RNA sequence: GGGAACGACUCGAGUAGAGUCGAAAAGGAGGCGGAUCCCGAUUGAUGAAGUUUCUUCACCGCCUAUGGACAAGGAUCGAUCACAAUGGACAGGCUGUUGUCCCGUUUCCGGCUACAGACCAAAGUAAUCAUUUUCGUACUGCCUUUCAUAAUCAGCAUCAUAACCGUUUUUCGAAACGGUUAUGAUAAAAGAAACAACAACAACAAC
Reactivity to DMS in 0.01 (KOAc 150mM, MgCl2 10mM, bicine 150mM(pH8.5), 24C), signal-to-noise 3, nucleotides 027 to 156: g040g000a060g020g030c010g000g000a220u000c000c020c010g000a170u010u000g030a130u000g010a040a210g010u000u000u000c010u000u010c020a070c030c040g000c050c060u000a080u000g030g010a080c030a100a060g030g030a080u040c080g020a080u000c040a050c090a080a190u000g010g010a100c060a120g030g040c030u000g010u000u010g020u000c010c030c100g000u000u010u010c020c020g010g010c010u000a080c030a040g010a110c020c040a030a060a180g010u000a050a130u020c030a130u000u000u000u000c070g010u000a070c070u010g020c000c030u010u000u000c030a120u000a060a110u000c050a100g000c120
Reactivity to 2A3 in 0.01 (KOAc 150mM, MgCl2 10mM, bicine 150mM(pH8.5), 24C), signal-to-noise 4, nucleotides 027 to 156: g090g020a020g010g010c030g020g000a060u030c040c020c020g090a130u080u180g040a050u070g070a100a060g030u060u040u010c000u080u040c060a030c030c010g000c010c000u020a070u050g040g000a020c060a090a030g030g000a040u080c020g020a030u080c090a020c030a120a070u060g030g010a010c030a040g030g000c020u010g010u080u010g040u080c000c000c020g030u040u080u070c060c000g000g010c020u030a030c030a060g090a170c020c020a090a070a010g050u100a100a100u070c050a060u020u040u060u070c040g040u040a050c050u070g070c010c020u020u090u060c050a050u070a100a070u140c040a020g100c030